Source: RMDB library OK1LIB, as collected in RNAgym. An RNA of 177 nucleotides, treated with DMS and 2A3 and read out base by base. For 2A3, 42,453 sequencing reads were counted. Conditions: 150 mM KOAc, 10 mM MgCl2 and 150 mM bicine (pH 8.5), 24 C. Values cover nucleotides 27 to 126. 2A3 adducts were read by reverse transcription with SuperScript II with manganese.
RNA sequence: GGGAACGACUCGAGUAGAGUCGAAAACAGGGUGCUUAUGUAGCUGGUAACGCAUAUAACUCAUAUGUGGCGUACUUUGAGUUAAAUUACUUACCCCGUAGAUAUGAGUCGGUGCCAGGAGCGACGAUCAAGGGUUGCUCUUCGGGGCAACUCUUGAAAAAGAAACAACAACAACAAC
Reactivity to DMS in 0.01 (KOAc 150mM, MgCl2 10mM, bicine 150mM(pH8.5), 24C), signal-to-noise 9, nucleotides 027 to 126: c080a100g000g000g010u010g000c040u010u010a060u020g010u010a100g020c030u000g010g010u010a050a070c070g010c300a070u020a090u020a070a050c020u000c020a020u010a020u010g010u020g010g010c130g010u020a060c100u010u010u020g010a040g000u010u030a040a080a100u020u010a060c060u000u010a080c070c040c010c030g000u020a080g010a070u020a030u010g000a050g000u000c040g000g020u000g000c020c030a050g010g010a070g010c030g000a080c110g010a130
Reactivity to 2A3 in 0.01 (KOAc 150mM, MgCl2 10mM, bicine 150mM(pH8.5), 24C), signal-to-noise 9, nucleotides 027 to 126: c040a020g060g030g050u070g020c020u090u070a050u190g110u120a080g040c020u020g010g040u040a080a020c020g020c100a020u100a020u030a160a040c020u020c040a010u030a030u120g120u110g090g050c070g040u060a050c040u060u070u090g030a030g020u030u090a050a110a130u170u070a030c020u020u050a040c010c000c000c020g030u050a040g040a110u060a030u100g030a020g020u040c020g020g020u040g020c010c010a020g010g020a020g020c020g060a060c040g010a030